[RMDB]
RNA sequence: GGGAACGACUCGAGUAGAGUCGAAAAGGAGCGACAAGUAUUUAGCUUGAGAUAGCUAAAUCACCUCGGUAUGAUUAGGGAGAGACCUAGGAACCGUAGGGGUAUUCUCAAAGGAAGCUUUUGCAGUGAAGGAAGAUACGAUUCGUCGUAUCUUCAACUAUCUAUCGGGAUUCGUCCCGAUAGAUAGAAAAGAAACAACAACAACAAC
Reactivity to 2A3 in 0.01 (KOAc 150mM, MgCl2 10mM, bicine 150mM(pH8.5), 24C), signal-to-noise 6, nucleotides 027 to 156: g080g010a060g040c060g070a070c080a080a020g040u100a070u010u010u000a000g000c000u020u040g030a020g000a080u150a030g000c010u000a000a000a000u010c010a020c000c010u040c020g000g020u230a150u170g070a080u070u080a040g000g020g010a090g020a020g030a130c000c020u010a020g000g020a030a010c020c010g020u040a030g000g030g000g000u020a060u140u050c050u010c000a050a060a010g060g010a050a020g020c000u040u090u140u120g030c090a040g030u060g140a080a040g110g010a000a000g020a000u000a000c000g000a010u000u100c210g040u020c000g000u100a000u000c000u000u000c000a000a000
Reactivity to DMS in 0.01 (KOAc 150mM, MgCl2 10mM, bicine 150mM(pH8.5), 24C), signal-to-noise 3, nucleotides 027 to 156: g010g000a080g030c040g020a070c050a060a060g000u010a030u000u000u000a020g010c010u000u010g010a190g000a120u010a020g020c000u000a000a010a020u000c010a040c010c010u010c020g010g010u000a110u000g010a200u010u000a070g010g020g020a190g010a170g020a060c000c010u000a080g010g000a100a080c030c030g020u010a040g020g000g030g000u000a040u000u000c030u000c040a070a090a120g000g010a110a150g000c040u000u000u000u000g020c040a140g000u000g010a150a120g000g010a020a010g000a020u000a010c010g010a100u000u000c280g010u000c000g010u000a000u000c000u000u000c000a020a110
Chemical mapping of a 207-nucleotide RNA with 2A3 and DMS. The DMS profile rests on 8,241 reads. The reactions ran in a buffer of 150 mM KOAc, 10 mM MgCl2 and 150 mM bicine (pH 8.5), at 24 C. DMS adducts were read by reverse transcription with MarathonRT.